[RMDB]
RNA sequence: GGGAACGACUCGAGUAGAGUCGAAAAACUCCUAUUCCAACACGUCCUCGUCGUACAGAGUGGUAACAUGUGGCACCACAUAUCCAAGCUUGGGUACACGGGCUUGACCCAACCCCUUGGGCGGAUGAAAACCAGAUUACGUUCGCGUAAUCUGGAAGGAUGUCCUAGAGUUCGCUCUAGGACAUCCAAAAGAAACAACAACAACAAC
Reactivity to 2A3 in 0.01 (KOAc 150mM, MgCl2 10mM, bicine 150mM(pH8.5), 24C), signal-to-noise 1, nucleotides 027 to 156: a000c050u000c000c000u000a040u090u040c020c000a010a000c020a010c070g090u040c000c050u010c020g210u010c000g010u060a080c080a090g080a070g050u000g000g030u060a070a030c050a160u120g000u060g090g000c040a030c030c000a080c060a040u060a020u030c000c000a030a020g010c040u020u020g010g000g000u010a030c010a020c020g010g000g020c050u210u180g120a300c000c000c000a000a020c000c000c010c000u000u000g000g000g000c010g010g000a060u070g070a060a060a000a030c000c000a000g000a010u010u010a000c010g020u060u010c200g020c010g040u000a000a000u030c000u000g000g000a000a000